[RMDB]
RNA sequence: GGGAACGACUCGAGUAGAGUCGAAAAGUUGCUGCUUGGAUCCACGCCUCACAUGUAAAGGCUGCAGGGCCAACCACCAAUCAGGACCCCUCAGACGACCCCAGCUCAGACGAUCCAUCGAGAUGGACUGGGAAUAAUUUUUCGAAAUUAUUCCCAGAAAAGAAACAACAACAACAAC
Reactivity to 2A3 in 0.01 (KOAc 150mM, MgCl2 10mM, bicine 150mM(pH8.5), 24C), signal-to-noise 9, nucleotides 027 to 126: g040u040u050g020c020u010g010c020u030u030g020g030a060u040c020c010a040c060g020c000c010u080c000a090c020a090u160g070u250a120a060a050g040g000c030u040g050c080a080g010g030g000c010c010a020a030c010c010a030c010c020a030a050u100c030a030g100g020a110c000c000c020c000u020c020a040g010a070c020g060a060c000c000c000c010a010g000c020u030c040a030g020a100c040g020a030u000c010c010a020u030c100g100a120g020a110u040g010g030a020
Reactivity to DMS in 0.01 (KOAc 150mM, MgCl2 10mM, bicine 150mM(pH8.5), 24C), signal-to-noise 7, nucleotides 027 to 126: g000u010u010g010c040u000g010c100u000u000g010g000a090u010c040c020a100c090g010c040c020u000c050a070c120a080u020g020u030a070a120a090g010g000c020u000g010c120a070g000g010g000c040c030a060a070c080c040a080c040c060a050a110u020c110a110g000g000a100c040c010c010c030u010c040a080g020a070c070g000a080c040c020c010c040a090g000c040u010c040a050g020a100c060g000a100u000c010c010a080u000c110g010a120g010a130u020g000g010a180
Source information
The record gives the reactivity of an RNA of 177 nucleotides to 2A3 and DMS. The 2A3 profile rests on 16,519 reads. Values are in units of 0.01, from 0 to 300, in steps of 10.